[RMDB]
RNA sequence: GGGAACGACUCGAGUAGAGUCGAAAAUCAUUGGCUUCGCUGCGCGCUGCGUUGCCUAGGCUUCAGAUGCUUCGUACUGUUGCCAACGUUGCAAAUUCCAAACGCUAAUGCGAAAGUGUGCAAACAAUCCAGAAUAUUUAUUCGUAAAUAUUCUGGAAAAAGAAACAACAACAACAAC
Reactivity to 2A3 in 0.01 (KOAc 150mM, MgCl2 10mM, bicine 150mM(pH8.5), 24C), signal-to-noise 5, nucleotides 027 to 126: u110c030a030u030u080g010g000c010u010u000c010g020c060u100g000c020g000c000g000c010u020g000c010g020u010u010g010c000c000u020a060g010g010c010u010u010c010a030g030a210u120g070c040u110u130c080g060u080a070c020u020g030u040u010g020c000c010a030a030c080g050u050u080g030c040a050a060a110u120u010c030c010a080a060a020c030g010c030u130a220a020u190g010c010g010a010a010a000g020u030g000u000g030c000a040a050a030c020a020a050
Reactivity to DMS in 0.01 (KOAc 150mM, MgCl2 10mM, bicine 150mM(pH8.5), 24C), signal-to-noise 6, nucleotides 027 to 126: u010c090a110u010u010g000g010c010u000u000c020g010c020u000g010c060g000c090g020c020u010g000c050g020u000u000g010c020c020u000a140g000g020c030u000u000c020a030g020a160u010g010c090u010u000c110g020u010a100c040u000g010u000u000g020c010c020a090a120c180g010u000u000g000c060a030a070a140u010u000c020c030a060a110a150c050g020c020u000a060a120u010g020c030g000a050a070a060g020u010g010u000g020c070a120a070a100c180a080a140
Structure probing data (2A3 and DMS) for a 177-nucleotide construct. The data come from the RNA Mapping Database (RMDB), library M2PK90. For 2A3, 9,589 sequencing reads were counted. For 2A3 the reverse transcriptase was SuperScript II with manganese. Conditions: 150 mM KOAc, 10 mM MgCl2 and 150 mM bicine (pH 8.5), 24 C.